[RMDB]
Conditions: 150 mM KOAc, 10 mM MgCl2 and 150 mM bicine (pH 8.5), 24 C. Chemical mapping of a 177-nucleotide RNA with DMS and 2A3. DMS adducts were read by reverse transcription with MarathonRT. Source: RMDB library OK1LIB, as collected in RNAgym. For 2A3 the reverse transcriptase was SuperScript II with manganese.
RNA sequence: GGGAACGACUCGAGUAGAGUCGAAAAGGAGGUUGAGGACCUCUGGGCUGAGUAUGAGGAAGCUGCUGCAAGGGAGGCAGCUGAGGCGUCUGAGGCCUCAAAUGGACAUGCCACAUCUGAGGUGGCACCUUGACAGUCUAUUCGUAGACUGUCAAGGAAAAGAAACAACAACAACAAC
Reactivity to DMS in 0.01 (KOAc 150mM, MgCl2 10mM, bicine 150mM(pH8.5), 24C), signal-to-noise 9, nucleotides 027 to 126: g010g010a050g010g020u000u010g010a110g000g010a200c020c000u000c020u000g010g010g020c010u010g000a270g010u020a040u010g010a070g010g010a230a020g000c000u000g010c000u010g000c110a280a170g000g000g010a300g000g000c000a010g020c010u000g000a290g000g000c020g010u010c030u000g010a170g000g000c000c010u000c050a020a030a060u020g010g000a110c150a100u020g020c000c000a010c010a080u030c150u030g010a150g010g020u000g010g000c010a030
Reactivity to 2A3 in 0.01 (KOAc 150mM, MgCl2 10mM, bicine 150mM(pH8.5), 24C), signal-to-noise 9, nucleotides 027 to 126: g090g010a030g030g020u040u070g050a070g020g090a200c000c000u000c010u010g010g010g000c010u030g020a040g080u250a180u170g070a070g090g060a050a010g000c010u010g010c010u040g020c070a110a100g080g050g020a050g040g010c000a000g000c000u000g010a030g010g020c020g030u070c060u080g050a040g060g000c000c000u010c000a030a040a020u090g030g020a030c030a100u070g000c010c000a010c010a060u150c170u240g080a080g090g060u000g000g000c000a020